Structure probing data (2A3 and DMS) for a 177-nucleotide construct. The data come from the RNA Mapping Database (RMDB), library OK2TST. The RNA was probed in 150 mM KOAc, 10 mM MgCl2 and 150 mM bicine (pH 8.5) at 24 C.
RNA sequence: GGGAACGACUCGAGUAGAGUCGAAAAGAACUGGGGGCCGCAUCUUCAGUGGGAACAGCGGCACCCACCUGACCCCGGGGGCUUCCCUGGGAGCAUCCUGCACACUGAAGGCGGCACGGGUGCCCACGCAUUAAAGAAGCUUCGGCUUCUUUAAUGCAAAAGAAACAACAACAACAAC
Reactivity to 2A3 in 0.01 (KOAc 150mM, MgCl2 10mM, bicine 150mM(pH8.5), 24C), signal-to-noise 1, nucleotides 027 to 126: g010a080a050c070u050g000g000g110g030g000c000c000g020c000a060u020c030u030u080c030a050g020u100g080g050g020a110a050c050a080g000c020g000g070c020a030c000c000c000a010c010c030u050g080a070c000c020c020c000g000g020g010g000g050c110u210u140c000c000c020u010g020g030g030a040g020c000a050u020c000c020u040g010c020a010c010a000c050u060g030a060a030g080g050c070g020g000c020a000c060g030g020g030u030g050c000c000c000a050c060
Reactivity to DMS in 0.01 (KOAc 150mM, MgCl2 10mM, bicine 150mM(pH8.5), 24C), signal-to-noise 1, nucleotides 027 to 126: g000a120a060c120u000g000g000g000g020g030c020c010g030c020a030u010c020u000u000c020a060g020u000g020g010g010a100a130c160a050g010c100g020g020c060a030c030c000c000a020c050c050u000g000a190c070c010c000c050g010g000g010g000g020c270u010u000c010c010c030u020g010g000g010a050g030c010a020u010c030c010u010g010c040a100c030a070c020u000g000a050a020g010g020c060g020g000c000a050c060g000g000g030u000g010c020c010c040a110c210